The record gives the reactivity of an RNA of 207 nucleotides to DMS and 2A3.
[RMDB]
RNA sequence: GGGAACGACUCGAGUAGAGUCGAAAACGCUGGGCUUAGGCAUGCGUGUGACAUGCUGAAGCGCGCACGGCAACAGCACACGACCCAUGUGUAGCCUAAGCCUGUGCUGAAGCGCGCACGGCAACCGAAAGGUGCGAUACUCUCGUUCGCGAGAGAAAUAUGGUAAGUAUUUCGAUACUUACCAUAUAAAAGAAACAACAACAACAAC
Reactivity to DMS in 0.01 (KOAc 150mM, MgCl2 10mM, bicine 150mM(pH8.5), 24C), signal-to-noise 3, nucleotides 027 to 156: c070g020c020u000g000g020g020c000u000u000a070g030g030c020a050u010g030c000g010u010g000u000g010a160c030a190u000g000c010u000g010a070a120g010c000g020c030g030c050a290c030g000g010c020a060a170c130a120g020c020a060c010a050c020g010a150c130c080c100a170u020g030u010g030u000a150g000c010c000u000a050a070g010c000c020u000g000u000g000c030u000g010a110a120g020c030g010c030g040c000a200c090g000g010c020a100a120c010c010g000a070a170a190g030g010u000g010c000g010a130u000a070c040u000c000u000c000g020u000u000c230g000c020g000a030g000a030g030a030a070
Reactivity to 2A3 in 0.01 (KOAc 150mM, MgCl2 10mM, bicine 150mM(pH8.5), 24C), signal-to-noise 7, nucleotides 027 to 156: c040g020c010u020g010g000g020c010u000u000a000g020g000c030a070u220g060c020g010u010g000u000g020a140c070a160u090g000c000u020g020a150a060g000c000g000c010g000c010a030c020g030g000c010a130a060c040a230g080c000a020c010a010c020g170a220c010c090c100a140u290g100u070g110u180a050g010c010c000u000a000a000g010c000c000u010g010u030g000c010u060g040a130a040g000c000g010c000g000c010a010c020g020g010c030a080a060c010c000g050a120a030a030g010g000u020g000c000g010a030u090a190c010u000c000u000c000g010u070u040c260g000c010g080a010g000a010g000a120a050
The reactions ran in a buffer of 150 mM KOAc, 10 mM MgCl2 and 150 mM bicine (pH 8.5), at 24 C.
The 2A3 profile rests on 9,064 reads.
The DMS profile rests on 7,799 reads.